[RMDB]
RNA sequence: GGGAACGACUCGAGUAGAGUCGAAAAGAUAUGGAUCUGAACUACAGCCUUAAGUUUCGUUGAUCUCGGAAACGAGGGAGAAACGAAGGGCUGCAGAUCCUAAGUCAAAGAGGUCUUCGGACCUCAACCCCUACUCAUAGUUCGCUAUGAGUAGGGGAAAAGAAACAACAACAACAAC
Reactivity to DMS in 0.01 (KOAc 150mM, MgCl2 10mM, bicine 150mM(pH8.5), 24C), signal-to-noise 3, nucleotides 027 to 126: g030a050u000a300u000g010g000a000u000c000u020g000a070a040c110u010a300c000a010g010c010c000u000u000a040a300g000u000u000u000c010g010u010u000g010a030u010c010u000c000g010g000a130a130a170c000g000a000g010g000g000a030g000a000a000a020c000g000a230a120g010g000g000c000u000g000c000a000g000a000u010c010c000u000a040a060g010u000c030a060a100a160g010a020g010g000u000c000u000u010c180g040g000a000c000c000u000c000a060a040
Reactivity to 2A3 in 0.01 (KOAc 150mM, MgCl2 10mM, bicine 150mM(pH8.5), 24C), signal-to-noise 3, nucleotides 027 to 126: g060a010u080a040u140g000g000a000u000c000u040g010a080a090c110u160a080c300a010g010c000c000u110u060a170a020g000u000u010u010c080g140u300u030g000a010u010c010u010c000g010g040a070a070a060c020g000a010g000g010g000a030g020a000a000a000c010g020a060a030g030g010g000c010u000g010c000a000g000a000u000c000c010u020a110a030g020u000c010a090a070a090g010a030g020g010u000c010u110u130c300g130g010a010c010c000u000c000a010a010
Chemical mapping of a 177-nucleotide RNA with DMS and 2A3.
For DMS the reverse transcriptase was MarathonRT.
Conditions: 150 mM KOAc, 10 mM MgCl2 and 150 mM bicine (pH 8.5), 24 C.
Source: RMDB library TTRDEL, as collected in RNAgym.